[RMDB]
RNA sequence: GGGAACGACUCGAGUAGAGUCGAAAAGAGAUGGCGAGAGCCAUCGGUAGUAUAGCGAAAAUCAUAAAUGAGAAGAGCUCUAAACACCUAAGUAGAGUUAAAAUAAUUAGACAGGCACUACUACAAACACGGCCUCGAACGUUCGCGUUCGAGGCAACAUCGAAAUCUACUUCGGUAGAUUUCGAUGAAAAGAAACAACAACAACAAC
Reactivity to 2A3 in 0.01 (KOAc 150mM, MgCl2 10mM, bicine 150mM(pH8.5), 24C), signal-to-noise 1, nucleotides 027 to 156: g110a000g020a000u000g000g000c000g030a060g000a000g090c040c000a000u000c000g000g010u000a000g000u010a050u100a050g060c020g050a020a070a100a130u050c010a100u080a180a190a160u170g030a020g000a130a070g050a030g000c000u000c000u010a000a100a050c040a060c050c050u090a110a110g070u060a030g040a000g060u050u070a020a100a050a080u110a050a030u120u110a010g020a130c020a000g000g090c030a000c060u020a010c000u040a020c070a050a160a000c080a020c190g160g000c000c010u000c000g000a000a000c000g010u020u070c150g020c000g080u010u000c000g020a000g000g000c020a000a000